Chemical mapping of a 207-nucleotide RNA with DMS.
For DMS the reverse transcriptase was MarathonRT.
The RNA was probed in 150 mM KOAc, 10 mM MgCl2 and 150 mM bicine (pH 8.5) at 24 C.
RNA sequence: GGGAACGACUCGAGUAGAGUCGAAAAUCCUAAGUCAGCGUAAAAUGAUGACCGCUCUUGUCAGACGGUCGGAAACGACCGUCUUGGAUUUAGAGCGCAAGUGAAGAAGCUGAUAUGGAAAAAGAAAGAAGUGUAGAUUCGUCUACACUUCUUUCAAUACGUUUAGUAAGUUCGCUUACUAAACGUAAAAAGAAACAACAACAACAAC
Reactivity to DMS in 0.01 (KOAc 150mM, MgCl2 10mM, bicine 150mM(pH8.5), 24C), signal-to-noise 3, nucleotides 027 to 156: u000c030c010u000a070a240g020u000c000a020g000c010g020u010a090a110a260a100u020g010a160u000g000a260c260c000g010c010u010c000u000u000g030u000c030a080g010a020c000g010g010u000c010g040g010a100a180a260c020g030a030c010c000g030u000c000u010u000g050g000a020u000u000u000a020g020a020g040c000g040c030a020a250g020u000g000a090a180g000a170a300g000c020u000g010a040u000a300u000g020g000a030a130a120a210a170g000a030a020a020g010a020a010g050u000g020u000a010g000a100u000u000c260g030u000c000u000a000c000a000c000u010u010c000u000u000u010c010a080a170